[RMDB]
RNA sequence: GGGAACGACUCGAGUAGAGUCGAAAAAAGGCGAUUCGUCAGGUCGCCGAGCUCGUUCAGAUGAGCGAUAUCGACGACAUCACUCUCGUGCACAACGAGCCGAUGGCGUUCACGCCGACGUUCUCUGUGUUCCGCGGACACAACGGCGAUCACGUCGCGUUGGCACUACUUUCGAGUAGUGCCAACGAAAAGAAACAACAACAACAAC
Reactivity to DMS in 0.01 (KOAc 150mM, MgCl2 10mM, bicine 150mM(pH8.5), 24C), signal-to-noise 2, nucleotides 027 to 156: a000a060g010g020c030g020a100u000u000c010g030u010c080a120g000g060u000c010g000c000c010g000a050g040c040u010c040g030u010u000c090a150g010a120u000g010a020g010c060g050a060u010a050u000c020g020a070c030g020a020c060a080u000c130a090c040u000c040u000c070g020u000g000c300a270c150a140a020c040g000a050g020c070c030g030a120u000g030g020c040g000u000u000c090a300c030g030c030c000g010a070c040g070u000u000c000u000c030u000g050u000g020u000u000c060c110g000c130g060g020a040c090a090c050a110a060c020g030g000c040g000a140u010c080a070c020g020u000c000g020
Reactivity to 2A3 in 0.01 (KOAc 150mM, MgCl2 10mM, bicine 150mM(pH8.5), 24C), signal-to-noise 5, nucleotides 027 to 156: a000a000g040g000c060g040a080u180u180c040g090u050c090a000g020g020u000c000g000c000c000g000a000g000c020u000c000g020u050u040c030a120g080a300u140g010a210g030c020g000a030u050a030u090c060g030a020c000g000a010c000a080u100c030a060c030u050c000u000c010g030u080g070c060a120c050a200a060c040g010a000g020c020c030g130a120u050g000g000c000g000u020u070c170a050c120g000c020c010g000a040c060g020u020u000c030u000c000u010g000u000g020u130u000c070c110g070c170g080g000a000c000a000c000a110a050c030g010g030c000g030a090u120c110a040c170g030u050c010g000
Background
The data come from the RNA Mapping Database (RMDB), library OK3TST. The record gives the reactivity of an RNA of 207 nucleotides to DMS and 2A3. Reactivities are given for positions 27 through 156. For 2A3, 2,838 sequencing reads were counted. For 2A3 the reverse transcriptase was SuperScript II with manganese.